[RMDB]
RNA sequence: GGGAACGACUCGAGUAGAGUCGAAAAUCGUCCUAAAAGGACUCAUCAGGUAGCCUAAUAGACUACGACUUAUGCAGUAGGUCGUGAAUAAGGCCGGAGUACAUUCCCUAUGGAACUAAGGGAACCCGCAUACUUCAUUCUUCGGAAUGAAGUAUGCAAAAGAAACAACAACAACAAC
Reactivity to 2A3 in 0.01 (KOAc 150mM, MgCl2 10mM, bicine 150mM(pH8.5), 24C), signal-to-noise 2, nucleotides 027 to 126: u040c010g000u000c000c010u080a090a100a000a010g060g000a030c000u000c050a120u040c050a040g120g070u120a010g020c000c000u110a190a160u050a120g040a030c060u040a020c100g010a000c000u030u040a020u090g220c060a060g080u080a010g050g000u030c020g000u040g030a040a050u070a070a010g000g000c000c030g070g000a040g000u020a030c000a070u000u000c000c000c000u000a040u070g030g070a040a150c040u030a130a090g000g000g030a000a020c050c030c030
Reactivity to DMS in 0.01 (KOAc 150mM, MgCl2 10mM, bicine 150mM(pH8.5), 24C), signal-to-noise 1, nucleotides 027 to 126: u010c190g000u000c050c000u010a040a060a050a210g040g010a000c000u010c060a010u000c110a110g000g040u010a060g010c010c020u040a070a160u000a060g000a120c070u000a020c000g000a000c000u000u000a020u010g000c250a030g020u000a040g000g010u000c020g000u000g000a110a050u010a120a070g000g000c000c030g010g010a040g000u000a060c120a210u010u000c000c000c010u000a080u000g000g000a020a050c140u010a150a020g020g000g000a040a060c140c090c140